[RMDB]
RNA sequence: GGGAACGACUCGAGUAGAGUCGAAAAGAUAUGGACCAGGUGGAUGCGUGAUGACCAAUAGAAACACAUGAUCAUCGGAAACGAUGAUCAUGUGUUUCUAUUGCAAGCGCGCCACUGGUCCUAAGUCCACUUGAAAUGAGUUCGCUCAUUUCAAGUGAAAAGAAACAACAACAACAAC
Reactivity to DMS in 0.01 (KOAc 150mM, MgCl2 10mM, bicine 150mM(pH8.5), 24C), signal-to-noise 5, nucleotides 027 to 126: g010a090u000a300u000g000g000a010c010c000a010g000g010u000g020g010a050u010g040c010g050u000g010a100u020g010a200c300c000a000a010u000a000g010a010a000a010c000a010c000a010u000g010a010u000c000a000u000c000g000g020a090a050a110c000g000a000u000g000a000u000c000a000u000g010u000g000u000u000u000c000u000a000u000u000g010c030a030a140g010c000g010c000g000c010c010a010c000u000g000g000u000c000c000u000a020a080g010u010c040
Chemical mapping of a 177-nucleotide RNA with DMS. Conditions: 150 mM KOAc, 10 mM MgCl2 and 150 mM bicine (pH 8.5), 24 C. For DMS, 6,099 sequencing reads were counted. Values cover nucleotides 27 to 126.